Chemical mapping of a 207-nucleotide RNA with 2A3. Source: RMDB library OK3TST, as collected in RNAgym. The reactions ran in a buffer of 150 mM KOAc, 10 mM MgCl2 and 150 mM bicine (pH 8.5), at 24 C.

[RMDB]
RNA sequence: GGGAACGACUCGAGUAGAGUCGAAAAGUAGAUCACACCCUGUCUAACGAAAUACUCAAAAAGCCCGUUGUACGGGGAAAGACAUCACCGAUGAAGCAUCGGAACUUUUAUAAACACUGCGAAUCACGUACAUCCAGGGGUAGUUCGGUGGGGGUGACUUGUUUCUCUCUUUCGAGAGAGAAACAAGAAAAGAAACAACAACAACAAC
Reactivity to 2A3 in 0.01 (KOAc 150mM, MgCl2 10mM, bicine 150mM(pH8.5), 24C), signal-to-noise 1, nucleotides 027 to 156: g040u060a050g030a120u000c000a040c010a080c030c000c000u010g000u110c020u050a030a010c010g010a100a070a050u150a080c080u080c180a000a010a040a160a200g080c010c000c000g000u000u020g000u030a000c010g030g000g200g020a070a100a000g060a040c010a070u090c030a080c030c000g010a000u020g160a110a070g190c040a010u000c000g000g040a020a040c040u040u070u090u040a240u170a070a040a030c110a030c120u060g050c070g030a030a040u030c010a010c070g040u030a010c000a020u000c080c070a050g000g000g010g020u000a050g000u010u000c030g000g000u060g020g000g010g040g000u000g010a000